[RMDB]
RNA sequence: GGGAACGACUCGAGUAGAGUCGAAAAGAUAUGGACUCGCUCCCCACCUAUAGCAAUCUAAGACAGUGUUGCAACUCGGAAACGAGUUGCAACAUCGAGAUUGACUAUAGAGGCGAGUCCUAAGUCAUCGACAAUGUAACUUCGGUUACAUUGUCGAAAAAGAAACAACAACAACAAC
Reactivity to DMS in 0.01 (KOAc 150mM, MgCl2 10mM, bicine 150mM(pH8.5), 24C), signal-to-noise 1, nucleotides 027 to 126: g000a090u020a270u020g000g000a020c000u000c000g070c010u000c090c090c000c000a300c150c050u010a000u000a000g000c000a000a000u000c000u040a280a160g040a280c300a190g000u000g000u000u000g000c000a010a000c000u000c000g000g000a000a070a140c010g000a000g040u000u000g000c010a000a010c000a000u010c040g010a000g000a000u000u000g000a190c000u000a000u000a000g000a070g050g020c010g000a050g010u000c000c000u000a000a070g010u040c050a160

The record gives the reactivity of an RNA of 177 nucleotides to DMS.
The DMS profile rests on 664 reads.